[RMDB]
RNA sequence: GGGAACGACUCGAGUAGAGUCGAAAAAUCCCCUCAAAAUCGUUUCAGUCCAAAAUUGAUUCGGCGGCCCUGUCAUGAGGCCGAAACGAAGGCACGUACCCCUUCGAAUGGCGUCGGGGAGUCAGCGAAAGCACUGACCCUUUCGAGGGUCAGUGAACAACUAGCCUAUGUUCGCAUAGGCUAGUUGAAAAGAAACAACAACAACAAC
Reactivity to DMS in 0.01 (KOAc 150mM, MgCl2 10mM, bicine 150mM(pH8.5), 24C), signal-to-noise 1, nucleotides 027 to 156: a180u000c030c000c010c060u000c090a070a170a140a030u020c020g020u010u000u000c000a090g040u000c020c160a120a110a200a100u000u000g000a100u000u010c070g040g040c050g000g000c000c010c020u000g010u000c160a110u010g010a050g030g040c000c010g020a020a020a060c080g040a060a080g050g020c070a150c070g000u000a180c080c030c010c040u000u020c020g010a070a150u010g020g020c000g020u000c050g000g000g010g020a080g000u010c020a070g010c020g030a100a100a120g060c020a010c020u020g010a000c000c000c000u030u000u010c250g000a060g040g020g000u000c000a000g040u010g000a040a110
Reactivity to 2A3 in 0.01 (KOAc 150mM, MgCl2 10mM, bicine 150mM(pH8.5), 24C), signal-to-noise 2, nucleotides 027 to 156: a000u040c000c010c000c010u190c070a210a220a130a170u050c030g000u010u100u020c080a100g040u090c170c080a210a140a140a110u070u130g040a080u030u060c040g080g000c010g000g010c040c030c020u050g020u070c060a120u140g030a020g010g000c000c000g020a010a000a000c000g010a010a000g000g000c120a000c150g200u150a060c000c000c000c000u000u000c000g050a070a080u110g050g050c060g100u050c020g010g000g000g030a020g010u050c040a050g030c020g020a110a030a010g030c000a000c000u000g010a010c010c000c000u000u050u010c120g040a010g000g010g010u000c000a000g000u000g000a000a000
Record summary
An RNA of 207 nucleotides, treated with DMS and 2A3 and read out base by base. It was measured as part of the RMDB library M2RFPK. For DMS the reverse transcriptase was MarathonRT. 2A3 adducts were read by reverse transcription with SuperScript II with manganese.